[RMDB]
Chemical mapping of a 177-nucleotide RNA with DMS and 2A3. For DMS the reverse transcriptase was MarathonRT. The RNA was probed in 150 mM KOAc, 10 mM MgCl2 and 150 mM bicine (pH 8.5) at 24 C. The 2A3 profile rests on 3,031 reads.
RNA sequence: GGGAACGACUCGAGUAGAGUCGAAAAUAACUCCUCCCGCGAGAGCCGGUAAGGUGGAAACGCUAUGCGGUACUGCCUGAUAGGGUGCUUGCGAGUGCCGCGGGAGGUCUCGUAGAAAAUAACCUAAAUCACAACGAUAGUUCGCUAUCGUUGUGAUAAAAGAAACAACAACAACAAC
Reactivity to DMS in 0.01 (KOAc 150mM, MgCl2 10mM, bicine 150mM(pH8.5), 24C), signal-to-noise 3, nucleotides 027 to 126: u010a070a170c120u000c000c010u000c010c000c010g020c010g010a080g000a300g010c010c010g030g000u010a110a130g000g020u000g000g010a070a100a160c010g010c010u000a110u010g000c030g010g000u010a100c000u000g020c010c000u010g000a130u020a170g000g010g020u000g010c020u000u000g030c050g010a040g010u000g000c010c020g000c010g000g000g000a010g010g000u010c000u000c060g000u000a110g010a080a070a060a090u010a100a090c060c020u000a060a130
Reactivity to 2A3 in 0.01 (KOAc 150mM, MgCl2 10mM, bicine 150mM(pH8.5), 24C), signal-to-noise 2, nucleotides 027 to 126: u080a010a010c020u000c010c010u000c020c000c000g000c000g000a070g000a010g100c030c030g050g130u170a170a060g050g010u040g000g060a100a220a010c000g000c040u070a040u300g110c020g000g010u040a010c010u020g000c000c020u050g010a010u030a050g010g010g020u030g000c010u050u120g020c020g020a020g000u020g000c010c000g000c000g000g010g010a000g000g000u000c000u000c000g020u030a030g190a060a160a030a070u130a040a040c010c000u060a130a170